[RMDB]
RNA sequence: GGGAACGACUCGAGUAGAGUCGAAAACCGAGGGGACCGUCCCCUCGGUAAUGGCGAAUGGGACCCAGAGAUCUCUCUAGAUUCCGAUAGAGAAUCGAGAGAAAACUGGCUCUCCCUUAGCCAUCCGCGCGACCACGGUUCGCCGUGGUCAAAAGAAACAACAACAACAAC
Reactivity to DMS in 0.01 (KOAc 150mM, MgCl2 10mM, bicine 150mM(pH8.5), 24C), signal-to-noise 5, nucleotides 027 to 129: c030c000g050a010g010g010g010g000a240c170c180g070u110c000c010c010c000u020c010g000g000u000a000a030u020g000g030c010g050a120a100u020g000g000g000a060c200c010c020a000g000a040g050a290u020c020u020c000u000c010u040a140g040a010u000u020c000c030g070a150u070a090g050a120g020a040a000u040c000g000a030g000a000g000a010a010a150a140c020u010g000g000c030u010c090u050c000c010c000u000u010a150g000c040c010a040u030c020c000g040c090g040c010
Reactivity to 2A3 in 0.01 (KOAc 150mM, MgCl2 10mM, bicine 150mM(pH8.5), 24C), signal-to-noise 3, nucleotides 027 to 129: c000c000g000a000g020g020g000g020a070c060c070g300u300c030c000c000c000u000c000g000g000u000a000a020u010g000g000c000g020a030a030u030g000g000g010a000c010c000c000a000g000a000g010a000u000c000u000c000u010c020u070a090g010a020u010u000c010c020g170a220u130a160g240a030g000a050a010u010c010g000a000g000a000g000a000a000a000a000c000u000g000g000c010u010c000u000c000c000c000u010u020a000g000c000c000a000u000c000c000g100c020g020c040